[RMDB]
RNA sequence: GGGAACGACUCGAGUAGAGUCGAAAAUUACAUAAGUCUAACACCUUGUUUCGGACUAACAAGGGCGUAUGGAGGAUGGCCGUGCCUCCAUAGUUAGACGUCCGAGAACCAGCCGAAAUGAAAAAGAAUCAUAAUGGCCAUUCGUGGCCAUUAUGAUAAAAGAAACAACAACAACAAC
Reactivity to 2A3 in 0.01 (KOAc 150mM, MgCl2 10mM, bicine 150mM(pH8.5), 24C), signal-to-noise 1, nucleotides 027 to 126: u180u170a070c010a020u150a160a110g020u020c020u020a030a020c040a050c050c020u000u000g050u030u040u150c150g080g000a100c090u040a050a000c000a000a000g040g000g000c040g080u020a000u020g000g020a010g010g000a000u080g060g000c020c000g010u010g040c000c020u000c000c000a000u010a000g010u010u010a030g010a020c000g000u000c000c000g040a020g010a090a070c040c010a000g040c020c000g070a040a050a030u120g110a060a070a060a020a000g100a030
Reactivity to DMS in 0.01 (KOAc 150mM, MgCl2 10mM, bicine 150mM(pH8.5), 24C), signal-to-noise 2, nucleotides 027 to 126: u020u020a090c200a080u060a080a130g000u030c020u000a020a060c010a110c020c030u040u050g000u000u020u010c070g000g000a080c070u030a040a040c030a000a090g000g030g010c130g040u000a000u000g000g000a010g000g030a030u010g020g000c010c020g000u000g020c000c000u000c010c000a000u000a030g060u030u000a020g010a090c000g030u000c030c010g000a100g000a140a130c130c120a200g000c000c010g020a070a070a040u000g000a020a050a060a100a120g000a130
An RNA of 177 nucleotides, treated with 2A3 and DMS and read out base by base.
The 2A3 profile rests on 1,963 reads.
For DMS, 2,759 sequencing reads were counted.
DMS adducts were read by reverse transcription with MarathonRT.
The reactions ran in a buffer of 150 mM KOAc, 10 mM MgCl2 and 150 mM bicine (pH 8.5), at 24 C.
Values are in units of 0.01, from 0 to 300, in steps of 10.